[RMDB]
Record summary
The record gives the reactivity of an RNA of 177 nucleotides to 2A3 and DMS. High 2A3 reactivity points to a flexible backbone, as in loops and unpaired stretches. For DMS, 19,411 sequencing reads were counted. Conditions: 150 mM KOAc, 10 mM MgCl2 and 150 mM bicine (pH 8.5), 24 C. Reactivities are rounded to 0.1 and cut off at 0 and 3. It was measured as part of the RMDB library OK1LIB.
RNA sequence: GGGAACGACUCGAGUAGAGUCGAAAAACGACAGCGACGGUCCCGGCACGUCGACCCCCUGCCACAGCGACAGCGUGCCGAACAGGGAGGUCGCCGCAUCGGCGGUGAACUUCUCCACCAGCGUGGAGGGAUCAUAUUAUUUCGAUAAUAUGAUCCCAAAAGAAACAACAACAACAAC
Reactivity to 2A3 in 0.01 (KOAc 150mM, MgCl2 10mM, bicine 150mM(pH8.5), 24C), signal-to-noise 9, nucleotides 027 to 126: a000c080g070a020c040a030g020c020g060a030c020g050g040u070c010c010c000g000g020c030a030c030g070u090c010g100a110c000c000c000c000c010u030g040c020c020a060c020a060g030c020g090a050c030a030g020c020g050u040g020c020c020g020a080a040c040a040g020g000g010a040g010g010u010c000g000c010c000g010c010a210u280c140g260g000c000g020g000u020g010a040a030c000u040u020c010u020c010c010a040c020c020a030g040c030g050u050g010g050a070
Reactivity to DMS in 0.01 (KOAc 150mM, MgCl2 10mM, bicine 150mM(pH8.5), 24C), signal-to-noise 6, nucleotides 027 to 126: a080c070g000a110c080a080g000c040g010a060c050g000g000u020c030c030c020g010g000c070a050c040g010u010c040g010a160c030c020c010c020c030u020g000c030c040a060c100a050g020c050g010a090c140a120g000c050g010u020g010c070c020g000a100a070c140a150g010g000g000a030g000g010u000c000g000c010c000g030c020a170u050c200g000g000c020g000g000u000g010a040a030c020u000u000c000u010c000c070a110c050c020a110g000c060g000u000g000g010a300